[RMDB]
Chemical mapping of a 177-nucleotide RNA with 2A3 and DMS. For DMS, 52,297 sequencing reads were counted. The RNA was probed in 150 mM KOAc, 10 mM MgCl2 and 150 mM bicine (pH 8.5) at 24 C. For DMS the reverse transcriptase was MarathonRT.
RNA sequence: GGGAACGACUCGAGUAGAGUCGAAAAGGGAGGUUGACUCCCCGGCGCCAUUAGGCUUUACCUCUACGAGGCGCUUCGGAGGGGUUUGCGUUAGAGACUUUGCGUUAGGUUAUUUUUUUUGAUAGUGCAGUGAUGAGUUGUUCGCAACUCAUUAUUGAAAAGAAACAACAACAACAAC
Reactivity to 2A3 in 0.01 (KOAc 150mM, MgCl2 10mM, bicine 150mM(pH8.5), 24C), signal-to-noise 9, nucleotides 027 to 126: g030g020g010a050g020g030u170u210g080a080c010u020c000c000c000c000g020g000c000g010c010c010a060u090u120a040g020g010c000u090u100u090a100c020c010u020c010u030a050c070g130a110g070g000c030g000c000u040u080c040g010g000a060g000g020g000g000u030u090u110g030c020g030u060u100a040g010a010g010a120c010u070u070u080g010c020g030u030u050a030g020g070u030u020a120u050u060u030u020u010u010u050u070g100a120u110a080g090u090g090
Reactivity to DMS in 0.01 (KOAc 150mM, MgCl2 10mM, bicine 150mM(pH8.5), 24C), signal-to-noise 9, nucleotides 027 to 126: g010g000g010a040g010g010u030u030g000a210c020u010c000c010c020c050g010g000c030g000c020c050a070u030u010a070g000g010c080u010u010u020a070c060c040u010c030u000a080c090g000a080g000g010c070g010c030u010u010c220g000g000a050g000g000g000g010u010u010u010g010c070g000u020u020a070g000a150g000a050c040u010u010u010g000c060g000u000u000a060g020g000u000u010a000u000u000u000u010u020u020u030u010g010a080u010a050g010u020g010